An RNA of 177 nucleotides, treated with 2A3 and read out base by base. For 2A3 the reverse transcriptase was SuperScript II with manganese. The 2A3 profile rests on 485 reads. The data come from the RNA Mapping Database (RMDB), library RFM100. The reactions ran in a buffer of 150 mM KOAc, 10 mM MgCl2 and 150 mM bicine (pH 8.5), at 24 C.
[RMDB]
RNA sequence: GGGAACGACUCGAGUAGAGUCGAAAAGGUCACCGCCAGUGGGAUUUCCUGUUUUUUAAUAACAGGCGGCUGUACUGAGUACAUCACCAAACCCCAACACCUCAACACCGUUUCGCUCUGGUGCAUAGUAUACGCCGAUCUUCGGAUCGGCGUAUACAAAAGAAACAACAACAACAAC
Reactivity to 2A3 in 0.01 (KOAc 150mM, MgCl2 10mM, bicine 150mM(pH8.5), 24C), signal-to-noise 1, nucleotides 027 to 126: g050g000u100c090a120c140c010g050c010c000a070g040u130g000g070g090a140u090u000u040c000c000u000g070u000u020u000u020u070u180a150a160u070a010a010c000a000g030g030c050g060g000c030u070g030u050a020c000u060g020a020g080u070a020c040a100u020c050a010c090c010a000a000a190c020c000c000c000a100a000c010a000c030c030u120c030a020a050c000a020c000c030g100u070u120u060c050g020c040u000c020u100g040g030u030g000c000a010u100a010